[RMDB]
Conditions: 150 mM KOAc, 10 mM MgCl2 and 150 mM bicine (pH 8.5), 24 C. The record gives the reactivity of an RNA of 177 nucleotides to 2A3 and DMS. It was measured as part of the RMDB library TTRDEL.

RNA sequence: GGGAACGACUCGAGUAGAGUCGAAAAGAUAUGGAAGAUUACCAGGGAGCUCCUCGGAAACGAGUGAGCUUUGAUCUGGACGAUCUUCCUAAGUCAAAACCAACCUGCUCUUCGGAGCAGGUUGGAAGAAUUAAGAAUACUUCGGUAUUCUUAAUUCAAAAGAAACAACAACAACAAC
Reactivity to 2A3 in 0.01 (KOAc 150mM, MgCl2 10mM, bicine 150mM(pH8.5), 24C), signal-to-noise 2, nucleotides 027 to 126: g010a020u080a060u130g000g000a000a000g000a000u010u020a030c010c000a000g000g030g020a000g000c000u000c010c010u000c010g020g040a070a050a030c020g010a000g060u300g040a010g050c010u000u020u020g000a010u000c000u010g020g120a220c090g000a010u000c000u000u000c010c000u000a120a030g050u010c030a010a030a090a130c020c010a000a000c000c020u000g000c000u020c020u080u120c300g120g000a000g020c000a000g010g000u010u000g010g000a000a050
Reactivity to DMS in 0.01 (KOAc 150mM, MgCl2 10mM, bicine 150mM(pH8.5), 24C), signal-to-noise 2, nucleotides 027 to 126: g000a030u000a300u000g000g020a010a010g020a000u000u010a110c010c000a010g020g000g000a010g030c000u000c000c000u000c010g000g000a060a060a150c010g000a000g000u010g020a000g000c000u000u000u010g000a040u000c010u000g010g000a080c120g000a010u000c000u000u000c000c000u000a010a100g000u000c010a120a050a140a160c010c000a000a000c000c000u000g000c010u000c000u000u020c160g010g000a020g010c000a000g000g000u000u000g000g000a020a030
Values cover nucleotides 27 to 126.